[RMDB]
Notes:
The record gives the reactivity of an RNA of 207 nucleotides to DMS and 2A3. For DMS the reverse transcriptase was MarathonRT. It was measured as part of the RMDB library M2RFPK. The RNA was probed in 150 mM KOAc, 10 mM MgCl2 and 150 mM bicine (pH 8.5) at 24 C. For 2A3, 573 sequencing reads were counted. For DMS, 2,236 sequencing reads were counted.
RNA sequence: GGGAACGACUCGAGUAGAGUCGAAAAGCUCUGUAAUGGGAUGGGAUCCGAAGCCCCAUUGAGGGAUAAUACAGGCUCUCCCCUCCAACUCCUAUUCCAACACGUCCUCGUCGUACAGAGUGGUAACUAAGGUAUAGCUCCUUCGGGAGCUAUACAAGACAAAACGUAUGUUCGCAUACGUUUUGUCAAAAGAAACAACAACAACAAC
Reactivity to DMS in 0.01 (KOAc 150mM, MgCl2 10mM, bicine 150mM(pH8.5), 24C), signal-to-noise 1, nucleotides 027 to 156: g000c030u010c020u000g040u000a010a110u010g010g010g020a020u000g020g000g010a070u000c050c050g050a070a210g020c050c000c000c030a140u000u040g000a090g030g030g020a070u000a030a070u010a090c090a180g010g000c040u000c020u020c020c010c000c030u000c030c040a020a080c070u000c010c000u000a080u000u000c010c020a040a140c070a100c050g000u000c030c060u020c070g020u000c020g070u000a060c030a070g010a100g020u010g030g010u000a090a130c140u020a020a080g000g020u000a020u000a010g010c010u000c000c000u000u000c270g100g000g010a010g000c000u010a010u000a000c010a060a080
Reactivity to 2A3 in 0.01 (KOAc 150mM, MgCl2 10mM, bicine 150mM(pH8.5), 24C), signal-to-noise 1, nucleotides 027 to 156: g000c000u010c050u060g050u020a170a060u200g070g020g020a020u020g000g000g040a060u280c030c070g010a050a020g040c070c040c000c060a180u150u180g030a260g030g060g000a020u070a140a060u110a150c150a010g000g120c000u020c040u010c030c050c000c010u000c010c010a010a040c040u030c020c000u020a120u140u020c050c020a080a050c020a040c050g140u150c000c070u100c110g180u060c000g000u000a040c020a010g020a050g010u010g030g040u070a080a000c070u040a180a000g110g000u010a000u000a000g000c000u000c000c000u030u000c030g080g000g000a000g000c000u000a000u000a010c000a000a010